[RMDB]
RNA sequence: GGGAACGACUCGAGUAGAGUCGAAAAAGGGCAGGGUGAAAUUCGCGAUCGGCGGUAAAGUCCGCGAGCCGAACGAAAAAGGUUUGGCAGGAACCGGUGAGAUUCCGGUACCGACAGUAUAGUCUGGAUGACCACUUCAGCUUCGGCUGAAGUGGAACAAAACAUUAAUGUUCGCAUUAAUGUUUUGAAAAGAAACAACAACAACAAC
Reactivity to 2A3 in 0.01 (KOAc 150mM, MgCl2 10mM, bicine 150mM(pH8.5), 24C), signal-to-noise 4, nucleotides 027 to 156: a010g020g010g030c050a030g040g020g000u010g020a060a040a080u160u100c040g000c040g100a120u060c000g030g000c000g000g000u010a010a010a000g000u000c000c000g000c010g020a020g000c000c000g000a000a000c010g110a070a040a070a050a050g110g000u010u000u000g000g010c000a010g000g010a010a000c000c010g000g000u000g000a010g000a000u000u010c000c000g020g000u010a010c000c000g000a000c000a000g010u020a020u070a100g060u020c050u040g060g030a080u100g050a030c000c000a000c000u000u000c000a000g000c000u020u080c210g120g000c000u000g000a000a000g000u000g000g000a000a010
Reactivity to DMS in 0.01 (KOAc 150mM, MgCl2 10mM, bicine 150mM(pH8.5), 24C), signal-to-noise 3, nucleotides 027 to 156: a100g010g000g030c030a060g000g000g000u000g010a060a070a190u000u000c050g000c070g020a130u000c000g020g010c000g000g010u000a090a140a070g020u000c010c010g020c000g010a300g010c010c000g010a020a100c010g000a040a100a130a180a140g000g000u000u000u000g020g030c020a060g030g000a040a030c000c000g000g000u000g000a270g000a300u000u010c000c000g000g020u000a010c010c010g010a050c060a030g020u000a090u000a120g010u000c030u000g000g000a140u000g010a220c010c000a010c010u000u000c010a020g010c010u000u010c300g050g020c000u010g020a010a010g030u000g010g010a010a070
The record gives the reactivity of an RNA of 207 nucleotides to 2A3 and DMS. For 2A3, 5,748 sequencing reads were counted. It was measured as part of the RMDB library M2RFPK.